[RMDB]
RNA sequence: GGGAACGACUCGAGUAGAGUCGAAAAGAUCGCUGAGACGCUUUGUCACUGAUUCAAAUUGCGGUGGAACGACUUCUGCUUUGUCAUCAGGAACAAUUCCAUUAUUCAUAAAUCCAAGAUGUGGCAACUCUCAGGAGAAAUUCGUUUCUCCUGAGAGAAAAGAAACAACAACAACAAC
Reactivity to 2A3 in 0.01 (KOAc 150mM, MgCl2 10mM, bicine 150mM(pH8.5), 24C), signal-to-noise 5, nucleotides 027 to 126: g010a050u070c030g000c090u050g040a010g010a060c040g010c080u060u060u070g010u020c010a010c050u060g040a110u160u110c080a070a120a170u140u150g020c030g010g010u020g010g010a040a030c030g030a030c040u020u000c010u030g040c020u090u080u140g100u080c040a060u040c020a040g040g010a030a040c030a040a090u060u020c020c000a020u070u090a060u100u110c020a020u070a220a120a020u010c030c010a050a020g060a120u070g010u020g040g010c000a000a120
Reactivity to DMS in 0.01 (KOAc 150mM, MgCl2 10mM, bicine 150mM(pH8.5), 24C), signal-to-noise 5, nucleotides 027 to 126: g010a040u010c050g020c050u000g010a150g010a100c120g020c130u010u000u000g020u000c010a070c030u010g010a180u010u010c090a050a090a120u010u010g010c170g030g020u010g000g000a070a040c060g000a190c160u000u000c020u010g020c100u010u000u010g010u010c130a090u000c020a040g000g000a040a030c080a090a120u010u000c020c010a030u000u000a120u010u000c060a060u010a050a080a100u010c060c040a070a060g010a090u000g020u000g010g010c050a080a170